[RMDB]
RNA sequence: GGGAACGACUCGAGUAGAGUCGAAAAUGAAAUAAAGCGCACCAAGAUGGAGGUGCGCAACCAGCGUGUCCUUGGAUCACGCAUCCACGCGUCUACCAAGACGCGAAAGGUAUUACAAAUAAAAAAACUAUGGCAUAAGAUUCGUCUUAUGCCAUAGAAAAGAAACAACAACAACAAC
Reactivity to DMS in 0.01 (KOAc 150mM, MgCl2 10mM, bicine 150mM(pH8.5), 24C), signal-to-noise 3, nucleotides 027 to 126: u010g000a120a090a110u000a080a120a130g000c000g050c000a000c000c000a120a140g010a210u010g000g000a190g000g010u000g000c000g020c000a010a020c070c070a150g030c010g030u000g010u010c010c070u010u000g020g030a060u010c020a010c030g000c030a130u000c030c030a120c020g010c000g000u000c000u000a170c300c290a050a030g000a020c000g020c000g000a000a010a050g000g000u000a080u010u000a110c170a040a050a070u060a020a010a080a020a060a100a090
Reactivity to 2A3 in 0.01 (KOAc 150mM, MgCl2 10mM, bicine 150mM(pH8.5), 24C), signal-to-noise 3, nucleotides 027 to 126: u080g010a020a000a070u210a030a080a040g000c000g000c000a000c000c020a060a020g140a100u240g090g070a080g000g030u020g020c000g000c000a000a000c000c000a010g000c020g010u020g000u100c040c030u090u200g080g020a060u160c010a010c040g000c000a010u030c010c000a030c020g000c000g000u000c010u020a140c000c060a040a010g010a000c010g000c000g010a030a040a000g020g010u030a030u100u080a130c080a030a180a070u260a080a120a020a000a000a000a010